[RMDB]
RNA sequence: GGGAACGACUCGAGUAGAGUCGAAAAUGAGGAGAAAAAGGAAACUGAAGAUCAUCGACCUACGGAUGCACGAAGUACCUCUCGUAGAGGGAGAUUCUGUGCGCGACGGUACGGCCAGUGAUGACGACGGUGCAGAUAUGUGAUCCAACUUAGUGCGUCCCUAUUUAUCUUUCGAGAUAAAUAGGGAAAAAGAAACAACAACAACAAC
Reactivity to 2A3 in 0.01 (KOAc 150mM, MgCl2 10mM, bicine 150mM(pH8.5), 24C), signal-to-noise 5, nucleotides 027 to 156: u100g010a020g000g020a020g060a020a060a020a020a010g070g030a090a060a020c050u060g010a100a030g020a120u050c010a020u060c040g030a050c000c010u040a030c040g080g020a060u110g020c020a000c020g010a030a000g030u090a080c010c020u020c000u020c120g100u140a060g030a060g050g070g000a040g010a020u080u010c050u160g040u010g010c020g000c020g030a030c060g010g010u080a060c040g010g020c030c020a080g030u050g080a070u050g020a020c030g010a010c010g050g000u020g010c010a010g030a070u070a030u160g070u060g020a010u030c020c000a010a050c040u110u100a040g020u080g130c040g040
Reactivity to DMS in 0.01 (KOAc 150mM, MgCl2 10mM, bicine 150mM(pH8.5), 24C), signal-to-noise 4, nucleotides 027 to 156: u000g000a040g010g020a080g030a030a050a040a120a080g010g020a090a050a120c050u000g020a080a100g000a070u000c030a100u000c040g000a040c020c020u000a070c030g010g000a150u000g000c030a030c020g000a070a050g030u000a070c040c000u000c010u000c090g000u000a210g010a210g020g020g010a050g010a120u000u020c030u000g010u000g030c020g040c000g030a040c050g000g020u000a050c060g050g020c000c000a100g020u010g010a100u000g000a060c070g000a140c060g010g030u000g020c030a060g000a080u000a060u000g000u000g010a070u010c040c040a030a080c050u000u000a060g010u000g020c050g010